[RMDB]
RNA sequence: GGGAACGACUCGAGUAGAGUCGAAAACGCUGGGUGCCUACCCACCGGAUUCGGAAGCUACAGCUUUGAUCGUACUGAAGCGCGCACGGUACGGGAGCUGUAGCUUCGAAUCCGAGGGCACCUGUGCUGAAGCGCGCACGGCAACCGAAAGGUGCGAGAGUAGAAGCUUGUUCGCAAGCUUCUACUCAAAAGAAACAACAACAACAAC
Reactivity to 2A3 in 0.01 (KOAc 150mM, MgCl2 10mM, bicine 150mM(pH8.5), 24C), signal-to-noise 2, nucleotides 027 to 156: c080g020c030u060g020g000g000u000g010c010c000u070a170c040c030c040a030c020c000g030g000a020u030u040c090g170g090a040a000g020c000u020a020c010a030g000c010u270u160u120g170a180u240c040g000u010a000c000u010g050a170a050g040c020g000c010g000c030a020c030g000g000u010a000c020g020g000g020a000g000c000u010g000u000a000g000c000u000u010c000g000a000a010u030c000c000g000a010g000g000g010c000a000c000c000u010g000u050g000c010u060g020a140a040g040c000g000c000g000c010a010c000g000g000c030a040a040c050c010g070a100a040a030g040g000u050g010c020g050a170